Source information:
The record gives the reactivity of an RNA of 177 nucleotides to DMS. Source: RMDB library M2PK90, as collected in RNAgym. Values cover nucleotides 27 to 126.
RNA sequence: GGGAACGACUCGAGUAGAGUCGAAAAUUAAAGAACUAUGAUCUGCACUGAACAAGUCACGGUGGUCGGAAACGACGCCGAAAGGCCAGGUCAUAGUUCCGACCUGAAGACUUCACGGGUCAAAAAAUACUAAUUAUUACUUCGGUAAUAAUUAGUAAAAAGAAACAACAACAACAAC
Reactivity to DMS in 0.01 (KOAc 150mM, MgCl2 10mM, bicine 150mM(pH8.5), 24C), signal-to-noise 3, nucleotides 027 to 126: u000u010a110a090a050g000a010a010c010u000a020u000g000a000u000c000u000g000c020a000c000u000g000a090a100c130a030a020g010u000c010a300c030g000g030u000g030g020u010c010g030g000a090a100a150c010g020a000c000g020c000c000g010a030a070a110g000g020c010c030a010g020g010u000c000a010u000a010g010u000u000c010c060g000a020c020c010u010g000a100a110g000a030c010u000u000c160a130c040g000g010g000u010c000a000a010a090a090a090a130
DMS adducts were read by reverse transcription with MarathonRT.